This 177-nucleotide RNA was probed chemically with DMS and 2A3. For DMS the reverse transcriptase was MarathonRT. Conditions: 150 mM KOAc, 10 mM MgCl2 and 150 mM bicine (pH 8.5), 24 C.
RNA sequence: GGGAACGACUCGAGUAGAGUCGAAAAUCUAUAAAGCAUUUACCCUAUCUGUUAUCACCUAACGCAAGUUAUCCACCAUCCAAGCGUCGAAACUGUAUGAAAACAAGGUUUUAGUUUCACCACAUCAUCACCUUAUUAAGUUCGCUUAAUAAGGUGAAAAAGAAACAACAACAACAAC
Reactivity to DMS in 0.01 (KOAc 150mM, MgCl2 10mM, bicine 150mM(pH8.5), 24C), signal-to-noise 7, nucleotides 027 to 126: u000c040u000a100u020a100a070a100g010c080a060u010u000u020a130c030c030c020u000a060u010c060u000g010u010u000a060u010c060a050c040c040u010a060a060c090g020c060a060a070g000u010u010a080u010c050c020a040c040c020a050u010c040c040a060a060g020c050g010u010c060g010a050a040a060c050u010g010u010a050u020g010a080a040a060a070c160a080a110g010g010u000u000u000u010a100g010u000u000u000c020a080c050c050a090c150a050u020c140a170
Reactivity to 2A3 in 0.01 (KOAc 150mM, MgCl2 10mM, bicine 150mM(pH8.5), 24C), signal-to-noise 9, nucleotides 027 to 126: u020c020u030a130u140a150a110a020g050c040a060u040u060u150a100c010c010c000u030a060u060c040u060g090u100u040a040u080c020a030c030c030u030a080a010c020g010c040a040a020g010u030u030a050u070c010c020a020c030c000a030u020c010c000a050a010g030c010g050u050c030g070a040a050a040c030u050g040u130a070u150g120a040a050a030a060c050a050a070g030g020u030u020u030u090a010g010u000u010u030c040a050c050c010a080c010a060u100c010a020